[RMDB]
RNA sequence: GGGAACGACUCGAGUAGAGUCGAAAACUUAGGCCGAAGCUGGCUGCACCCCUCAAACCAUGAAGCUGAGAAGCACCCACUUUACAAGUGCAGCAGCCGGAGAGCAGGCUCUCAUCAGUGCAGGCUAAUUUACCGCAUGGUUCGCCAUGCGGUAAAUAAAAGAAACAACAACAACAAC
Reactivity to DMS in 0.01 (KOAc 150mM, MgCl2 10mM, bicine 150mM(pH8.5), 24C), signal-to-noise 1, nucleotides 027 to 126: c060u000u010a100g030g010c000c020g010a150a260g020c040u000g000g030c020u000g020c000a090c020c050c020c010u000c040a150a100a060c150c090a070u020g000a090a120g000c020u000g010a200g010a180a050g000c020a150c010c010c010a060c110u010u010u000a050c100a100a110g000u000g000c020a000g010c010a020g000c150c140g020g000a060g020a010g040c100a090g050g000c020u000c010u010c000a100u000c080a030g000u000g000c050a120g000g000c030u010a070